[RMDB]
RNA sequence: GGGAACGACUCGAGUAGAGUCGAAAAGUCUGCGGCAGCUCCCACUACGCCAACCCGCUGGUGUUCGGCAUCAUCUCGUCGGAGAUCAACAGCACCCGCUACAACUUCACGGUGGACUCGGCGGAGUACUCGUCGGACGACGAGUGACGCGGGAGCCCGGUUAGGCAUUAUUCGUAAUGCCUAACCGAAAAGAAACAACAACAACAAC
Reactivity to 2A3 in 0.01 (KOAc 150mM, MgCl2 10mM, bicine 150mM(pH8.5), 24C), signal-to-noise 3, nucleotides 027 to 156: g050u010c050u070g040c000g080g000c080a020g010c030u000c000c000c010a030c060u040a010c020g010c000c030a050a020c010c010c020g130c090u080g020g020u070g020u110u060c080g060g010c070a130u080c000a040u020c060u010c050g260u040c110g140g030a100g000a050u040c020a040a100c020a060g030c020a030c000c010c050g040c020u160a090c060a230a070c020u220u180c130a030c110g050g050u070g070g030a080c070u060c120g010g000c000g030g000a030g010u010a030c010u000c020g050u000c000g110g250a120c160g010a000c000g000a050g010u000g010a050c070g000c050g010g030g000a020g000c000c020
Reactivity to DMS in 0.01 (KOAc 150mM, MgCl2 10mM, bicine 150mM(pH8.5), 24C), signal-to-noise 1, nucleotides 027 to 156: g010u010c030u000g000c030g000g030c070a030g050c000u000c030c000c000a140c040u010a030c020g020c020c020a110a140c020c000c040g040c010u000g070g040u000g020u010u000c010g050g060c030a210u000c080a120u020c120u010c010g000u020c090g020g010a070g000a080u000c080a060a070c010a100g030c000a080c020c020c000g000c000u010a050c090a140a050c100u000u010c130a080c000g020g090u010g020g010a050c050u000c060g020g010c030g060g010a250g000u000a030c010u000c040g040u000c030g000g020a120c080g030a020c000g010a080g010u010g010a030c050g030c030g010g040g000a070g020c000c100

This 207-nucleotide RNA was probed chemically with 2A3 and DMS. For 2A3 the reverse transcriptase was SuperScript II with manganese. The reactions ran in a buffer of 150 mM KOAc, 10 mM MgCl2 and 150 mM bicine (pH 8.5), at 24 C.